Overview:
Conditions: 150 mM KOAc, 10 mM MgCl2 and 150 mM bicine (pH 8.5), 24 C. An RNA of 207 nucleotides, treated with 2A3 and DMS and read out base by base. It was measured as part of the RMDB library OK3TST. 2A3 adducts were read by reverse transcription with SuperScript II with manganese. Reactivities are given for positions 27 through 156. High 2A3 reactivity points to a flexible backbone, as in loops and unpaired stretches.
[RMDB]
RNA sequence: GGGAACGACUCGAGUAGAGUCGAAAAUUGGGUGACAAAAUUUACUAUAAUAUCUGCUAGCAACCCACCUAAAAUGGCACCAAUUUCUUCUGUUCUGCCUGGUAGUGAAUUGUGAAUUACACAGUAGCUUGGAGUUUGCUUCAGAUUGGCAAGAAGAUCUGAGGAUCAUAUUCGUAUGAUCCUCAGAAAAAGAAACAACAACAACAAC
Reactivity to 2A3 in 0.01 (KOAc 150mM, MgCl2 10mM, bicine 150mM(pH8.5), 24C), signal-to-noise 2, nucleotides 027 to 156: u070u050g020g040g000u050g020a010c050a010a180a030a100u070u180u120a090c070u080a080u140a300a250u120a100u130c030u060g040c050u040a010g000c000a000a000c020c030c030a000c000c000u090a090a090a090a090u100g040g000c000a050c030c000a030a100u080u060u030c020u020u020c010u010g080u040u070c000u010g000c000c000u000g050g000u000a020g000u010g040a090a020u020u030g010u050g060a050a080u050u080a030c070a030c030a050g070u060a010g030c030u030u090g000g000a020g010u030u100u050g000c000u000u010c010a020g000a060u020u050g040g000c030a060a020g010a050a000g010a060
Reactivity to DMS in 0.01 (KOAc 150mM, MgCl2 10mM, bicine 150mM(pH8.5), 24C), signal-to-noise 1, nucleotides 027 to 156: u010u010g010g010g010u020g010a130c000a090a090a060a110u000u000u000a080c020u000a130u010a090a100u010a090u010c040u000g000c090u010a080g020c020a030a080c050c000c010a070c100c050u000a060a060a130a190u010g000g040c000a070c010c020a060a170u000u010u000c080u010u020c060u000g010u000u000c050u000g000c040c000u000g030g000u000a030g010u010g030a010a050u000u020g030u000g000a140a140u000u010a120c080a060c050a120g000u010a080g020c070u000u000g000g010a110g000u000u000u020g040c010u000u000c000a060g000a090u010u000g020g000c000a030a090g000a070a130g010a130